[RMDB]
RNA sequence: GGGAACGACUCGAGUAGAGUCGAAAACUCGCGCGAACAUUGAGGCGUGGAGCGCGACAUGAAUCAGCCUCGAUUAGAUUAAUGGUCGACAGAUCAGCGGCGAUCAGCGACCUAAUUAGAAGCCGCGACCGGAAGAGGAGACGCUCGACGGACGUCAAAAUGCCUAGUGGUUCGCCACUAGGCAUUUAAAAGAAACAACAACAACAAC
Reactivity to 2A3 in 0.01 (KOAc 150mM, MgCl2 10mM, bicine 150mM(pH8.5), 24C), signal-to-noise 1, nucleotides 027 to 156: c000u000c000g000c000g000c000g010a180a060c000a030u090u100g000a000g000g000c000g010u000g030g030a060g000c000g000c000g140a000c040a080u300g140a150a070u120c040a170g000c000c010u000c010g060a040u080u060a000g060a030u000u140a090a140u080g000g000u050c000g010a080c030a140g000a000u000c000a000g000c000g010g000c000g010a000u010c020a070g000c000g000a010c000c000u000a010a010u000u050a040g110a300a060g000c000c000g100c000g000a130c000c000g020g060a120a000g010a080g030g000a050g080a090c000g030c000u060c080g020a040c000g040g050a020c000g000u030c030a010
Reactivity to DMS in 0.01 (KOAc 150mM, MgCl2 10mM, bicine 150mM(pH8.5), 24C), signal-to-noise 1, nucleotides 027 to 156: c020u000c050g010c050g030c000g050a090a060c000a140u010u000g000a060g000g030c010g020u000g050g020a260g020c000g010c020g020a070c050a090u000g040a040a120u030c040a070g000c010c000u000c020g000a220u010u000a100g020a100u000u020a140a300u000g000g040u000c020g020a100c110a120g000a120u020c050a100g000c060g000g010c010g010a020u010c020a100g040c080g010a010c050c000u020a010a010u000u020a100g010a000a100g040c000c030g000c080g000a090c050c060g040g030a280a080g000a170g030g020a260g050a050c060g000c030u000c000g050a160c030g000g000a010c020g000u060c010a120